[RMDB]
RNA sequence: GGGAACGACUCGAGUAGAGUCGAAAAAGUGCAAACGCAACAGUUUUGUCGGGGGUUCCUGUAACAGGUCUGUUGCGUGUGCGUUUUUAUUUGACGAAUUCUGACCGAUAUUGGUAGCACAUGAAUCCCCUCGAAAGUUGUUCGCAACUUUCGAGGGAAAAGAAACAACAACAACAAC
Reactivity to 2A3 in 0.01 (KOAc 150mM, MgCl2 10mM, bicine 150mM(pH8.5), 24C), signal-to-noise 1, nucleotides 027 to 126: a000g040u010g000c010a090a030a000c000g000c000a000a000c000a000g020u000u000u000u040g090u040c010g000g000g010g070g180u300u210c000c010u020g020u080a090a000c070a060g000g020u010c000u030g000u000u000g000c000g000u000g000u000g000c020g000u000u000u000u000u000a230u000u140u130g090a070c040g050a090a000u050u020c010u020g010a040c000c090g000a030u030a190u300u020g000g010u050a020g070c020a080c000a240u070g070a040a120u060c000
Chemical mapping of a 177-nucleotide RNA with 2A3. Values cover nucleotides 27 to 126. For 2A3, 502 sequencing reads were counted. It was measured as part of the RMDB library RFM100.